[RMDB]
RNA sequence: GGGAACGACUCGAGUAGAGUCGAAAAGGGGUCUCUCACCGUGAUUGGUCGUGGAGCUCUGAAGCCUCCACGGAGCGAUGAAACGACACCAACAAUCACGUUGAGAGACGGAGGCACCCGUAAGCCAAUCGCUGUGAUUCGUCACAGCGAUUGGCAAUCAGAGGUAACGAUUCGUCGUUACCUCUGAAAAAGAAACAACAACAACAAC
Reactivity to 2A3 in 0.01 (KOAc 150mM, MgCl2 10mM, bicine 150mM(pH8.5), 24C), signal-to-noise 2, nucleotides 027 to 156: g040g000g020g030u070c010u010c000u010c020a030c020c020g000u010g000a000u000u010g100g030u000c020g010u000g030g010a010g010c000u000c010u020g010a030a020g010c010c000u000c010c060a040c030g000g010a000g000c000g300a300u020g010a010a000a010c010g020a010c010a040c050c120a100a160c020a020a010u000c000a010c010g000u000u000g000a000g000a010g000a040c010g000g000a010g010g000c000a010c000c000c010g050u080a090a010g000c000c000a000a000u010c000g000c000u000g010u000g050a030u060u060c210g050u000c170a010c000a000g000c000g000a000u010u000g000g000c000a000a000
Reactivity to DMS in 0.01 (KOAc 150mM, MgCl2 10mM, bicine 150mM(pH8.5), 24C), signal-to-noise 1, nucleotides 027 to 156: g040g000g000g000u000c000u000c010u000c000a010c060c000g000u000g010a030u000u000g020g020u000c030g040u020g010g000a090g030c010u010c020u010g000a110a160g000c300c000u010c010c070a300c000g000g010a030g020c000g000a100u010g020a170a200a060c040g040a000c110a110c040c100a080a300c030a070a050u010c000a020c040g000u000u000g010a070g000a050g000a000c030g020g010a060g020g000c030a100c000c010c030g000u050a060a190g020c000c000a010a010u000c000g020c010u000g050u000g030a040u000u000c250g020u000c000a010c000a010g060c000g000a000u000u000g000g000c020a000a010